[RMDB]
RNA sequence: GGGAACGACUCGAGUAGAGUCGAAAAAUAAAAACCUAUGAAACGUGCCGUAUAUCAUUCACCUAAGUUAUGAGAGAGGAGACCGAGUAUCCUUUAUUCAUGGCGAGGACUCGGGCUAUUCGAGCGGCCACUACCACCUGUUCGCAGGUGGUAGUGGAAAAGAAACAACAACAACAAC
Reactivity to 2A3 in 0.01 (KOAc 150mM, MgCl2 10mM, bicine 150mM(pH8.5), 24C), signal-to-noise 4, nucleotides 027 to 126: a010u300a020a040a000a000a010c040c030u060a130u170g070a050a030a010c070g020u040g000c000c000g060u060a070u000a030u080c080a040u000u130c040a050c050c060u140a170a170g060u140u120a080u140g060a100g010a000g000a010g090g010a040g020a020c000c000g000a000g030u020a080u130c000c000u070u060u100a260u090u300c150a120u200g130g020c030g000a000g000g000a000c000u000c000g000g000g000c010u010a020u060u030c010g010a000g030c050g000g050
Reactivity to DMS in 0.01 (KOAc 150mM, MgCl2 10mM, bicine 150mM(pH8.5), 24C), signal-to-noise 2, nucleotides 027 to 126: a050u080a020a110a000a060a090c020c030u000a090u030g000a030a040a070c130g020u000g010c010c000g000u000a060u110a110u000c020a020u000u000c040a080c110c030u050a040a070g020u010u000a150u000g050a020g000a090g000a020g040g030a110g000a070c000c040g000a010g040u000a120u000c010c000u020u000u000a070u000u040c110a090u080g000g030c090g000a050g000g000a040c080u000c000g020g000g010c000u000a040u050u000c000g000a090g010c000g000g000